This 207-nucleotide RNA was probed chemically with 2A3 and DMS. 2A3 is a SHAPE reagent: it acylates the 2'-hydroxyl of flexible nucleotides of all four kinds. It was measured as part of the RMDB library M2RFOK.
[RMDB]
RNA sequence: GGGAACGACUCGAGUAGAGUCGAAAAACAGAAAAAAGGAGUUUAAAUUAGAUUGGCAAACGGACGGUACUAAAUACCGUCACUUUUACGUCUAACUUAUCGUUAACUCUGCAAAAAGAAAACAAGAAAAACAAGCGUGAGUUCGCUCACGCUUGAACAAGCAGGAAUAGUUCGCUAUUCCUGCUUGAAAAGAAACAACAACAACAAC
Reactivity to 2A3 in 0.01 (KOAc 150mM, MgCl2 10mM, bicine 150mM(pH8.5), 24C), signal-to-noise 3, nucleotides 027 to 156: a000c020a010g100a020a110a000a020a040a040g040g000a020g010u070u080u090a030a030a020u010u020a020g030a080u030u210g060g010c040a040a010a030c040g010g000a000c000g000g000u020a040c090u230a070a080a110u060a010c000c000g030u000c000a070c000u010u010u010u050a040c020g000u000c000u010a030a050c010u060u070a070u140c030g060u000u030a020a020c000u000c010u060g000c070a030a090a060a040a000g090a010a110a010a010c060a060a030g120a100a060a050a020a020c000a000a000g000c010g010u020g000a010g000u060u120c140g020c130u000c010a000c010g010c010u000u000g000a000a000
Reactivity to DMS in 0.01 (KOAc 150mM, MgCl2 10mM, bicine 150mM(pH8.5), 24C), signal-to-noise 2, nucleotides 027 to 156: a100c010a160g020a000a050a040a080a130a200g010g000a050g000u000u000u000a010a050a060u000u000a020g000a040u000u010g070g040c040a030a030a040c110g000g050a060c000g050g000u000a020c030u000a130a030a300u000a000c010c000g000u010c000a000c020u010u000u000u000a030c000g010u000c000u000a020a000c000u000u000a050u000c120g000u010u000a020a020c040u000c000u000g000c080a000a060a080a100a110g000a100a060a070a090c050a030a100g020a050a070a090a150a080c000a000a000g000c010g030u010g050a050g020u000u000c300g030c010u010c020a020c010g040c000u000u000g010a000a080